[RMDB]
About this RNA
Chemical mapping of a 177-nucleotide RNA with DMS and 2A3. The DMS profile rests on 997 reads. Values cover nucleotides 27 to 126. The data come from the RNA Mapping Database (RMDB), library OK2TRN. Conditions: 150 mM KOAc, 10 mM MgCl2 and 150 mM bicine (pH 8.5), 24 C.
RNA sequence: GGGAACGACUCGAGUAGAGUCGAAAAUACAGCGCGAACCAGGAGAUAACCACGGUCGCCAAGACCAGCAUGAUCUCGAAGAACAGCACCACGGGGACGAGUGUAUGCGGCCGCGGCCGCUUCCGUGCACCUGUAUUCGAUUCGUCGAAUACAGGUGAAAAGAAACAACAACAACAAC
Reactivity to DMS in 0.01 (KOAc 150mM, MgCl2 10mM, bicine 150mM(pH8.5), 24C), signal-to-noise 2, nucleotides 027 to 126: u010a070c080a080g020c100g000c030g000a070a100c090c030a070g020g020a070g000a090u000a110a060c100c050a210c120g010g030u000c030g040c140c160a110a110g030a040c040c000a090g040c070a050u000g020a080u000c020u010c040g020a140a090g030a110a090c090a060g000c090a060c040c030a070c090g000g000g030g000a100c070g000a060g020u030g000u020a060u030g030c000g030g000c000c070g090c300g000g010c000c030g020c040u010u020c000c010g000u000g000
Reactivity to 2A3 in 0.01 (KOAc 150mM, MgCl2 10mM, bicine 150mM(pH8.5), 24C), signal-to-noise 1, nucleotides 027 to 126: u120a000c040a010g050c010g010c010g050a050a070c040c020a040g030g070a090g020a080u080a070a020c030c020a040c090g020g020u020c000g020c070c010a030a030g000a010c000c000a040g090c020a030u120g010a040u030c020u030c120g030a080a030g000a140a030c040a020g020c040a020c000c060a010c020g020g000g050g050a000c010g020a040g070u150g030u080a030u120g020c000g040g040c030c020g090c260g000g070c000c020g110c000u030u010c000c020g050u040g020